[RMDB]
Chemical mapping of a 207-nucleotide RNA with 2A3. Source: RMDB library M2RFPK, as collected in RNAgym.
RNA sequence: GGGAACGACUCGAGUAGAGUCGAAAACCCCAAAACCUUACACUGAGAGCAUUUAGCCUGAUUACUCUUUAAAUCAAAUCAGGCAAUAGAGAGAAACUCGAGAGGUGAAAACCCCACAGCAUUCUCAAACGGUUACUCGGGUUCGCCCGAGUAACAAUCGGUAUUUAUGGUUCGCCAUAAAUACCGAAAAAGAAACAACAACAACAAC
Reactivity to 2A3 in 0.01 (KOAc 150mM, MgCl2 10mM, bicine 150mM(pH8.5), 24C), signal-to-noise 2, nucleotides 027 to 156: c000c020c000c010a010a170a020a070c050c070u160u160a040c090a060c110u160g050a000g020a010g020c040a060u050u050u000a030g000c010c000u000g030a010u000u020a030c010u030c040u100u300u190a030a030a030u250c140a050a010a000u000c000a010g000g000c010a010a000u010a000g030a000g000a000g010a040a060a040c010u040c160g040a050g010a090g160g050u030g030a020a040a010a010c000c000c000c020a040c040a000g010c020a080u110u030c010u020c030a130a130a080c020g060g000u000u000a000c010u000c010g000g000g020u050u060c160g100c000c000c000g000a000g000u000a000a000c000a000a010